[RMDB]
RNA sequence: GGGAACGACUCGAGUAGAGUCGAAAAUUGGCGGCAUCGGUACCUACAGUAGGUAAGUCGGAGAGUUGAACUUUUGUUCCACUCGGAACAACUAAGUUUCCGGUCAUUGUAUCACCCGAUUUUAUAAGGAACUCGUAGAUUUCGAUCUACGAGUUCCAAAAGAAACAACAACAACAAC
Reactivity to 2A3 in 0.01 (KOAc 150mM, MgCl2 10mM, bicine 150mM(pH8.5), 24C), signal-to-noise 2, nucleotides 027 to 126: u070u100g080g000c000g000g070c030a050u000c070g000g010u010a010c030c000u010a010c040a170g200u230a030g080g020u020a040a150g050u040c010g050g000a020g000a020g050u020u090g010a010a030c040u120u020u060u230g000u000u000c000c000a080c070u100c100g000g000a070a000c000a000a020c000u080a060a010g030u010u010u000c020c010g020g000u060c020a040u000u170g040u110a110u060c040a100c000c000c010g000a010u000u100u050u050a300u080a070a100
Reactivity to DMS in 0.01 (KOAc 150mM, MgCl2 10mM, bicine 150mM(pH8.5), 24C), signal-to-noise 1, nucleotides 027 to 126: u000u000g000g000c070g000g010c010a060u020c030g010g000u000a060c050c000u000a090c300a020g000u020a050g120g000u090a030a070g000u000c050g000g020a140g020a030g020u010u000g000a060a020c000u000u000u010u000g000u000u030c000c000a190c150u130c240g020g030a030a050c030a000a000c300u050a020a020g000u000u000u000c000c000g000g000u000c080a180u010u000g000u040a020u000c180a220c040c040c000g000a190u030u020u030u030a120u000a120a100